This 177-nucleotide RNA was probed chemically with 2A3 and DMS. For DMS, 4,127 sequencing reads were counted. The reactions ran in a buffer of 150 mM KOAc, 10 mM MgCl2 and 150 mM bicine (pH 8.5), at 24 C. Source: RMDB library OK2TST, as collected in RNAgym.
[RMDB]
RNA sequence: GGGAACGACUCGAGUAGAGUCGAAAAAAAGACGUCGUCAUCGGCAUGUCAGACAAGCCCUUCCUCUCCCAAGCUGACAUUGCUGAUCAGGGAGAAUUGUGCGAAUAUCUCGUGGAUACCAUUGCCACCAUAGUGAGGCAUUCGUGCCUCACUAUGGAAAAGAAACAACAACAACAAC
Reactivity to 2A3 in 0.01 (KOAc 150mM, MgCl2 10mM, bicine 150mM(pH8.5), 24C), signal-to-noise 3, nucleotides 027 to 126: a000a000a010g080a030c060g070u110c010g020u030c030a050u040c040g010g010c030a030u040g000u010c020a000g020a110c080a120a050g040c000c000c000u020u050c020c020u010c010u000c010c000c000a000a020g000c000u000g010a030c010a080u070u260g000c000u010g020a090u070c050a040g030g020g010a020g010a030a070u120u100g060u060g020c020g040a060a020u040a070u110c060u030c060g030u020g060g000a030u040a150c030c010a070u000u140g020c020c020a030
Reactivity to DMS in 0.01 (KOAc 150mM, MgCl2 10mM, bicine 150mM(pH8.5), 24C), signal-to-noise 4, nucleotides 027 to 126: a030a090a070g020a050c090g010u000c050g020u000c110a070u000c020g010g000c000a040u000g000u010c020a030g000a200c180a090a110g020c070c050c030u000u010c070c040u000c060u000c000c000c030a110a080g000c000u010g000a040c050a030u010u010g020c010u010g000a060u010c160a100g010g000g010a090g010a050a100u010u000g040u010g020c050g000a080a080u000a090u000c040u010c080g030u000g000g010a050u010a070c110c060a070u000u020g000c050c030a150
The 2A3 profile rests on 4,700 reads.